[RMDB]
RNA sequence: GGGAACGACUCGAGUAGAGUCGAAAACGUAAGAAAUUCUUCCGAAUUGCUGACUUGAUUCGGACUGCAGUCCAGCGGAACAAGGGUAAAUUCAUAGAGUUAACACUGCAAGUGCAAGAGCGGCUGGGUACCUAUGCUCAUUCGUGAGCAUAGGUACAAAAGAAACAACAACAACAAC
Reactivity to 2A3 in 0.01 (KOAc 150mM, MgCl2 10mM, bicine 150mM(pH8.5), 24C), signal-to-noise 3, nucleotides 027 to 126: c010g020u050a020a060g070a070a110a040u080u030c010u070u000c070c030g010a010a030u040u050g030c060u120g080a130c020u050u120g040a070u120u000c030g030g100a020c040u100g000c020a040g040u060c040c000a040g040c020g030g030a050a050c040a040a030g080g000g010u140a110a110a050u020u050c020a030u060a110g050a000g040u040u050a040a030c040a000c030u010g000c050a090a050g040u040g080c040a060a040g040a030g050c020g030g000c030u050g090g000
Reactivity to DMS in 0.01 (KOAc 150mM, MgCl2 10mM, bicine 150mM(pH8.5), 24C), signal-to-noise 4, nucleotides 027 to 126: c090g010u000a080a070g010a050a040a080u000u000c040u010u000c110c080g000a010a030u000u000g010c070u000g020a180c090u000u010g000a070u000u000c020g010g020a140c090u010g020c100a120g010u010c110c020a050g010c060g020g010a040a060c060a040a030g000g000g000u000a040a040a050u000u000c050a100u010a090g000a050g010u000u000a050a090c060a050c040u000g010c040a070a090g010u000g000c060a050a070g000a070g010c060g010g020c040u000g000g000